[RMDB]
RNA sequence: GGGAACGACUCGAGUAGAGUCGAAAACAGCAAAAAGGAACCGAUUCCCACCAAGUUCGGAAAGAGAUACCGGGCGAGGCGCUGAAGAAAGAAUCUCUCUUCAGACACCCCAAGGACUCGACUGAAGAAUGCACGCCAUCGUUCGCGAUGGCGUGAAGCAAAUUAUUUGCUUCGGCAAAUAAUUUGCAAAAGAAACAACAACAACAAC
Reactivity to 2A3 in 0.01 (KOAc 150mM, MgCl2 10mM, bicine 150mM(pH8.5), 24C), signal-to-noise 1, nucleotides 027 to 156: c010a000g170c030a110a110a020a000a090g190g040a080a050c050c060g010a060u000u000c010c020c020a050c030c080a080a010g020u030u050c000g050g040a110a110a030g010a010g010a010u080a070c020c020g010g010g010c100g140a110g060g050c220g000c020u010g020a010a000g010a010a080a040g120a180a180u060c120u000c010u000c000u050u000c000a020g040a050c000a020c010c060c000c020a020a100g020g010a030c000u010c010g020a030c060u060g000a020a000g110a050a040u160g060c010a000c010g010c000c000a000u000c000g010u030u040c190g020c020g120a000u000g000g000c010g000u010g000a000a000